The record gives the reactivity of an RNA of 207 nucleotides to 2A3. The RNA was probed in 150 mM KOAc, 10 mM MgCl2 and 150 mM bicine (pH 8.5) at 24 C.
RNA sequence: GGGAACGACUCGAGUAGAGUCGAAAACUCGCUGUUUUUGUGGCUGGCUUUCAGCGGGCUGGAGGAGCCGGGAGCGGAGGCGGUGGACCGAGCCAAAAACGUCAGCCGAGGCCGGGCGGCCCCGCUCAAAAUCUUCGUAUCUUCGGAUACGAAGAAAGUAGAAGAAAUACUUCGGUAUUUCUUCUACAAAAGAAACAACAACAACAAC
Reactivity to 2A3 in 0.01 (KOAc 150mM, MgCl2 10mM, bicine 150mM(pH8.5), 24C), signal-to-noise 1, nucleotides 027 to 156: c020u010c020g060c020u050g020u020u080u050u140u070g040u030g070g000c020u010g020g000c020u050u080u080c020a010g010c030g030g020g030c040u050g020g040a060g020g020a020g070c030c020g040g090g000a010g020c010g000g040a090g010g030c080g070g030u080g040g050a060c000c020g010a070g010c000c000a060a050a050a010a020c030g040u040c050a000g020c010c010g020a010g010g000c000c000g000g040g020c020g040g010c000c000c000c000g000c010u000c020a050a080a030a100u010c000u010u010c000g000u000a000u000c000u010u010c080g080g000a000u000a000c000g000a000a000g000a000a000a000